RNA sequence: GGGAACGACUCGAGUAGAGUCGAAAAUAAAAUUCUAUUUAUGUUUUGUAGAGAUGGGGUCUUACUAUGUUGUCCAGGCUGCUCUCAAACUCUUGGGCUCAGGUGAUUCUCCUGCCUUGGCCUCACAAAGUAUUGGGAUUACAGGCAUGAGCCACUAGUGGUAUUUUAUGUUCGCAUAAAAUACCACAAAAGAAACAACAACAACAAC
Reactivity to 2A3 in 0.01 (KOAc 150mM, MgCl2 10mM, bicine 150mM(pH8.5), 24C), signal-to-noise 1, nucleotides 027 to 156: u010a000a100a030a000u190u240c180u160a290u060u210u030a120u090g020u020u030u160u000g000u030a000g000a040g020a000u150g010g000g000g020u000c030u050u040a030c020u010a030u160g000u150u120g000u300c300c300a000g010g010c080u060g000c000u000c010u080c120a180a080a110c010u000c010u080u040g000g000g070c080u030c020a000g000g010u000g050a070u120u000c000u050c000c000u040g000c010c000u000u000g020g000c070c000u020c030a050c010a010a070a040g020u030a120u140u070g000g040g000a010u050u070a020c020a030g000g000c010a020u080g050a020g040c000c010a010c010u000a070